[RMDB]
RNA sequence: GGGAACGACUCGAGUAGAGUCGAAAAGUUCGGUUUAGUUUUCGUUUUAUUUACCGUGCGUGUAACCGUCAACGUCGACCAUGUUCAAUUCCAACAUACCGGCCUCCUCGCUGCUGAGCAUCGACAGCGUUAAGAGUCCUUUCGAGGACUCUUAACGAAAAGAAACAACAACAACAAC
Reactivity to 2A3 in 0.01 (KOAc 150mM, MgCl2 10mM, bicine 150mM(pH8.5), 24C), signal-to-noise 1, nucleotides 027 to 126: g050u040u050c020g030g090u080u100u210a010g000u050u040u080u230c040g030u040u060u000u110a170u020u130u010a100c030c030g000u040g030c030g000u110g080u090a080a040c030c000g010u000c020a050a020c020g050u030c030g040a070c000c010a040u090g070u020u090c020a060a100u080u060c020c000a030a000c000a030u120a040c070c020g130g000c000c040u070c000c030u020c000g020c010u010g020c030u020g040a020g090c030a040u040c020g110a090c060a010g000
Reactivity to DMS in 0.01 (KOAc 150mM, MgCl2 10mM, bicine 150mM(pH8.5), 24C), signal-to-noise 2, nucleotides 027 to 126: g000u000u000c020g010g010u000u010u000a080g000u010u000u010u010c130g030u020u020u000u010a080u010u000u000a080c060c040g050u000g000c080g040u000g000u000a070a090c120c030g010u010c090a060a070c090g020u000c080g000a050c080c050a090u010g010u000u000c080a030a150u000u000c030c010a080a090c110a060u010a130c100c030g000g020c060c040u000c030c020u000c030g020c040u000g000c000u010g010a060g010c060a080u000c040g000a060c110a070g010
The data come from the RNA Mapping Database (RMDB), library OK2TRN. Structure probing data (2A3 and DMS) for a 177-nucleotide construct. For 2A3, 1,068 sequencing reads were counted. For DMS, 2,020 sequencing reads were counted. For DMS the reverse transcriptase was MarathonRT. The reactions ran in a buffer of 150 mM KOAc, 10 mM MgCl2 and 150 mM bicine (pH 8.5), at 24 C.